[RMDB]
RNA sequence: GGGAACGACUCGAGUAGAGUCGAAAAGCUUUCUUCUUCCGCAAUUUUUCAGUGCUGAUUUUCAUUAUGGUACCUGAUGAAAAAGAAAACGGCGCAGCAGCUGAUAACAGCUUCUCUCUGCUGAUUGACCGCUAUCCUAUUUCGAUAGGAUAGCGGUAAAAGAAACAACAACAACAAC
Reactivity to 2A3 in 0.01 (KOAc 150mM, MgCl2 10mM, bicine 150mM(pH8.5), 24C), signal-to-noise 5, nucleotides 027 to 126: g020c030u030u060u000c010u050u000c010u060u020c020c030g080c140a140a120u060u070u020u040u110c020a040g030u010g040c000u040g070a140u010u040u050u050c070a070u020u130a100u240g060g000u070a080c020c040u020g010a020u030g040a070a030a010a040a020g140a020a060a000a040c070g060g010c030g000c020a030g010c000a020g010c020u020g030a060u080a210a090c020a050g030c000u080u010c010u000c000u000c010u020g020c020u020g010a120u050u160g050
Reactivity to DMS in 0.01 (KOAc 150mM, MgCl2 10mM, bicine 150mM(pH8.5), 24C), signal-to-noise 2, nucleotides 027 to 126: g010c090u000u020u000c020u000u000c000u000u000c020c010g010c130a070a110u030u000u030u010u000c080a050g030u010g020c050u040g000a120u020u000u000u000c020a060u000u000a070u060g000g010u000a090c040c060u030g000a060u000g000a010a040a050a070a090g010a100a070a130a090c080g000g040c060g000c020a040g030c050a020g020c060u000g000a040u010a000a080c060a030g010c040u010u000c040u000c040u000c000u000g000c000u000g000a080u030u020g000
The record gives the reactivity of an RNA of 177 nucleotides to 2A3 and DMS. Values cover nucleotides 27 to 126. The reactions ran in a buffer of 150 mM KOAc, 10 mM MgCl2 and 150 mM bicine (pH 8.5), at 24 C. The DMS profile rests on 2,266 reads. Reactivities are rounded to 0.1 and cut off at 0 and 3.